[RMDB]
RNA sequence: GGGAACGACUCGAGUAGAGUCGAAAAGAUAUGGACCGCAAGGACAUGCUUUAACCUCGGAAACGAGGUACAAGCAACAGCCUUGUCGGUCCUAAGUCAAAGGUGGGAACAGUUCGCUGUUCCCACCCUUAGAUCUCACGUUCGCGUGAGAUCUAAGAAAAGAAACAACAACAACAAC
Reactivity to DMS in 0.01 (KOAc 150mM, MgCl2 10mM, bicine 150mM(pH8.5), 24C), signal-to-noise 6, nucleotides 027 to 126: g000a010u000a040u010g000g010a000c000c000g000c010a010a000g010g000a030c020a300u020g010c010u000u000u000a300a090c000c010u000c000g020g000a020a010a030c000g010a010g000g010u010a010c300a000a010g030c000a080a060c290a100g000c010c000u000u000g000u020c030g020g000u000c000c000u000a000a050g000u000c000a090a150a100g000g010u000g010g010g000a010a020c000a010g000u010u020c260g040c010u000g010u000u000c000c000c000a010c000c000
Reactivity to 2A3 in 0.01 (KOAc 150mM, MgCl2 10mM, bicine 150mM(pH8.5), 24C), signal-to-noise 4, nucleotides 027 to 126: g030a000u020a010u030g000g000a000c000c010g000c010a010a000g020g000a040c170a300u300g010c000u020u030u030a090a090c000c000u000c000g000g000a010a010a020c000g010a010g010g000u010a010c040a000a000g000c040a050a080c100a180g000c010c000u000u020g020u030c000g000g000u000c000c000u000a000a010g010u000c010a140a110a050g010g010u000g000g000g010a000a000c000a000g060u130u140c270g110c190u000g000u000u000c000c000c000a000c000c000